An RNA of 177 nucleotides, treated with DMS and 2A3 and read out base by base.

[RMDB]
RNA sequence: GGGAACGACUCGAGUAGAGUCGAAAAGAUAUGGAGGCAUUGGGACAUGCUGUUGAGGGUCGGAAACGACCCGAUCAGCAACAGCCCACGGUGCCUCCUAAGUCAAAGUAUCUGCUUCGGCAGAUACGCUCCUUGUCCUCUUCGGAGGACAAGGAGCAAAAGAAACAACAACAACAAC
Reactivity to DMS in 0.01 (KOAc 150mM, MgCl2 10mM, bicine 150mM(pH8.5), 24C), signal-to-noise 1, nucleotides 027 to 126: g010a030u000a300u010g000g000a000g000g030c010a000u000u000g050g040g020a060c020a300u000g000c000u030g030u000u040g000a300g060g000g020u000c010g030g000a080a050a270c020g020a000c000c040c000g040a040u000c020a000g000c000a010a030c300a150g000c000c060c030a090c300g000g020u000g010c010c000u000c000c000u000a000a100g030u000c040a190a080a080g000u000a000u000c000u000g010c000u000u000c130g070g000c010a020g000a020u000a000c000
Reactivity to 2A3 in 0.01 (KOAc 150mM, MgCl2 10mM, bicine 150mM(pH8.5), 24C), signal-to-noise 1, nucleotides 027 to 126: g040a030u080a040u170g000g000a000g010g030c020a010u060u130g010g000g000a060c100a180u180g050c000u130g050u260u030g040a190g000g010g000u000c000g030g050a060a050a090c030g000a000c040c040c010g000a000u000c000a000g030c000a000a000c070a020g000c000c000c000a020c110g050g060u000g000c000c000u000c000c000u010a000a000g000u000c050a020a140a050g010u010a000u030c010u010g080c040u050u130c250g120g000c000a010g000a010u000a010c010
Source information:
The data come from the RNA Mapping Database (RMDB), library TTRDES. Values cover nucleotides 27 to 126. The DMS profile rests on 868 reads. The RNA was probed in 150 mM KOAc, 10 mM MgCl2 and 150 mM bicine (pH 8.5) at 24 C. High 2A3 reactivity points to a flexible backbone, as in loops and unpaired stretches.